[RMDB]
RNA sequence: GGGAACGACUCGAGUAGAGUCGAAAAAGGCCAAGGUCCGUCUGGAUGACGUCAAGCAGAAGAUGGACGACUUACUGGCCGAGCAACAGCGAGCUGAGUCAUCCGUCAACGUCCAGCAGGAUGCCGGCGUUAUCAACGAAAUGGACGCUCGGCAGCGACGUAGGCAGGUUUUCGAACCUGCCUACGUAAAAGAAACAACAACAACAAC
Reactivity to 2A3 in 0.01 (KOAc 150mM, MgCl2 10mM, bicine 150mM(pH8.5), 24C), signal-to-noise 2, nucleotides 027 to 156: a000g030g000c000c000a040a000g050g010u000c000c000g020u080c060u100g040g210a100u000g040a050c020g110u190c130a130a090g040c100a080g020a140a000g000a000u030g000g000a000c000g000a000c010u040u090a080c050u030g030g000c010c010g000a000g020c060a020a150c020a060g040c010g090a000g000c040u030g000a000g000u040c000a040u050c000c010g050u040c060a080a020c020g080u010c060c000a020g010c040a080g240g110a070u160g000c010c030g030g080c000g000u040u070a050u230c120a150a140c110g150a150a020a020u210g010g000a010c020g010c080u100c000g040g000c000a000g000c020g000